Structure probing data (2A3 and DMS) for a 207-nucleotide construct. The data come from the RNA Mapping Database (RMDB), library M2RFPK. 2A3 adducts were read by reverse transcription with SuperScript II with manganese. For DMS, 1,955 sequencing reads were counted. The RNA was probed in 150 mM KOAc, 10 mM MgCl2 and 150 mM bicine (pH 8.5) at 24 C.
[RMDB]
RNA sequence: GGGAACGACUCGAGUAGAGUCGAAAAGCUGAUACCUUACGAGGUAUCAGAAUGACUUCGUGGUAGAGCGCCACGAACGGAAAAUAAAGAAAGCUCGAUUGAAACGCACCGUGUACGCACGGUGCGAAAAAGUCGAUCCAGUUCGCUGGAUCGACAAGUUACUUCAAAAGUUCGCUUUUGAAGUAACAAAAGAAACAACAACAACAAC
Reactivity to 2A3 in 0.01 (KOAc 150mM, MgCl2 10mM, bicine 150mM(pH8.5), 24C), signal-to-noise 3, nucleotides 027 to 156: g020c000u000g000a000u000a000c000c010u050u040a080c250g110a010g000g000u000a010u010c000a000g010a010a030u110g030a030c020u000u000c000g010u000g000g000u010a150g020a000g010c000g000c010c010a000c000g000a000a000c020g050g010a060a050a000a010u040a010a030a020g150a060a050a000g000c010u010c020g120a130u070u210g060a130a110a020c000g000c000a010c000c020g000u000g020u060a030c200g000c070a000c000g000g000u000g030c010g000a000a000a020a000a000g000u000c000g000a000u000c000c000a010g020u060u060c130g050c090u000g010g000a000u000c000g010a000c000a000a000
Reactivity to DMS in 0.01 (KOAc 150mM, MgCl2 10mM, bicine 150mM(pH8.5), 24C), signal-to-noise 1, nucleotides 027 to 156: g000c050u000g010a000u000a000c000c000u000u000a230c190g010a050g040g030u000a000u000c000a010g010a070a100u030g000a150c030u000u010c000g030u000g010g070u010a020g000a040g010c020g040c030c000a010c010g010a000a010c000g000g010a070a060a110a100u000a070a120a170g000a040a060a100g000c000u000c000g000a280u000u030g010a150a080a160c010g040c010a010c000c010g060u000g040u000a130c300g070c040a010c000g000g050u000g020c000g010a000a010a000a120a140g000u010c000g010a010u000c000c010a040g070u010u000c220g040c010u000g000g010a010u000c010g010a000c010a000a040